Structure probing data (DMS and 2A3) for a 207-nucleotide construct. For DMS, 2,574 sequencing reads were counted. 2A3 adducts were read by reverse transcription with SuperScript II with manganese.

[RMDB]
RNA sequence: GGGAACGACUCGAGUAGAGUCGAAAAGCCUUGGCGGCCAGCGCUUCCAGGUCACCCAGCAGUUCCAUGCCGACGAUCACCUUGCCCUUGGUCUGCGCCUGGAGCACCUGCUUUUUGAUCGUGGCCAGGGCAGCGGCCAGGUUAAACUCCUGGUCCACACAUAGUUGGCAUUCGUGCCAACUAUGUGAAAAGAAACAACAACAACAAC
Reactivity to DMS in 0.01 (KOAc 150mM, MgCl2 10mM, bicine 150mM(pH8.5), 24C), signal-to-noise 1, nucleotides 027 to 156: g000c000c010u010u030g010g010c010g000g000c050c010a120g020c180g010c010u000u010c010c020a050g010g030u020c070a120c090c040c050a230g090c050a100g010u010u010c020c030a070u000g020c020c050g000a110c120g000a130u010c050a120c120c050u000u000g000c030c030c040u000u000g040g030u020c010u040g030c040g020c080c000u000g000g010a060g000c020a090c110c080u000g030c090u000u000u000u000u010g000a100u010c020g040u000g000g020c030c030a030g000g020g000c050a050g100c040g040g010c000c010a040g000g050u000u000a050a070a300c120u020c000c000u000g000g030u020c000c020a190
Reactivity to 2A3 in 0.01 (KOAc 150mM, MgCl2 10mM, bicine 150mM(pH8.5), 24C), signal-to-noise 4, nucleotides 027 to 156: g000c010c000u020u040g020g020c060g020g060c030c090a080g040c060g010c090u160u100c020c010a020g030g020u060c050a100c030c030c000a030g010c010a000g020u160u090c030c010a030u090g060c080c040g080a100c070g050a100u130c070a100c070c050u070u150g020c020c000c000u010u120g020g000u050c020u030g010c000g020c000c020u010g000g020a010g010c000a060c030c060u100g060c040u130u140u070u190u250g170a170u130c060g040u060g080g000c010c010a010g000g000g000c020a000g030c060g000g000c010c000a010g010g010u010u040a040a040a020c030u020c010c000u000g000g010u030c010c000a010